An RNA of 177 nucleotides, treated with 2A3 and DMS and read out base by base.
The DMS profile rests on 1,800 reads.
The RNA was probed in 150 mM KOAc, 10 mM MgCl2 and 150 mM bicine (pH 8.5) at 24 C.
2A3 is a SHAPE reagent: it acylates the 2'-hydroxyl of flexible nucleotides of all four kinds.
RNA sequence: GGGAACGACUCGAGUAGAGUCGAAAAUUUGGCGACCUCUAUUUGUUCAUUCUGUGCGAGCAGUUUGCCGAUGGCUUCGCGAAUAGAAGGAUGCCAGUUAACGGCGCGAUUGACCGCGUCAUUGAGCCAAUCAACAGACGUUCGCGUCUGUUGAUUGAAAAGAAACAACAACAACAAC
Reactivity to 2A3 in 0.01 (KOAc 150mM, MgCl2 10mM, bicine 150mM(pH8.5), 24C), signal-to-noise 2, nucleotides 027 to 126: u110u040u070g000g000c040g040a120c010c000u000c000u030a030u010u050u040g030u070u160c040a020u110u000c000u080g080u050g030c040g030a080g010c010a000g070u050u210u120g010c010c040g110a110u190g000g000c010u100u090c060g000c000g030a010a000u000a030g110a240a020g030g000a010u080g000c000c010a000g020u010u080a130a020c070g000g010c000g000c000g050a080u090u260g110a070c120c000g000c010g010u000c010a060u020u150g050a020g090c000
Reactivity to DMS in 0.01 (KOAc 150mM, MgCl2 10mM, bicine 150mM(pH8.5), 24C), signal-to-noise 2, nucleotides 027 to 126: u010u010u000g010g000c000g000a070c020c020u010c020u010a020u000u010u000g020u000u010c070a090u000u010c050u010g020u030g010c150g020a140g000c050a050g000u010u010u000g010c080c040g010a110u010g040g010c110u010u000c150g010c030g000a020a010u010a010g000a030a060g000g000a090u000g030c000c010a060g010u000u000a080a090c180g000g000c010g000c010g000a150u000u010g010a150c130c010g000c020g030u010c010a080u020u000g000a120g030c150